[RMDB]
RNA sequence: GGGAACGACUCGAGUAGAGUCGAAAAUCUACUGCUGGCUAAAGUCAUUGGGAAGUAUGAUCAAGAGAGCGCUAAAACCAUAUAUGAAAACACUGCGUUAUGACACAGGAGUUGCAAGUAGCAAGAUGAUGCUUCUACCGCACAAAGAUAUUGACACGUGCUUUAAUGCGUUCGCGCAUUAAAGCACAAAAGAAACAACAACAACAAC
Reactivity to 2A3 in 0.01 (KOAc 150mM, MgCl2 10mM, bicine 150mM(pH8.5), 24C), signal-to-noise 1, nucleotides 027 to 156: u000c000u070a070c110u040g000c010u010g110g000c100u170a120a120a120g000u060c000a060u080u190g000g000g120a010a000g000u000a000u110g050a010u070c000a070a000g130a000g000a000g190c000g010c010u080a000a010a050a180c060c050a020u060a000u000a010u230g080a020a000a160a000c110a050c040u160g000c000g000u100u000a050u020g100a060c050a000c030a200g120g000a050g000u070u140g080c020a000a000g000u000a010g020c020a120a000g000a000u040g000a000u110g010c000u010u000c010u000a000c000c100g000c110a040c000a020a140a000g160a000u130a050u050u070g000a020c010a000c300
This 207-nucleotide RNA was probed chemically with 2A3. 2A3 adducts were read by reverse transcription with SuperScript II with manganese. Reactivities are given for positions 27 through 156. Conditions: 150 mM KOAc, 10 mM MgCl2 and 150 mM bicine (pH 8.5), 24 C. 2A3 is a SHAPE reagent: it acylates the 2'-hydroxyl of flexible nucleotides of all four kinds.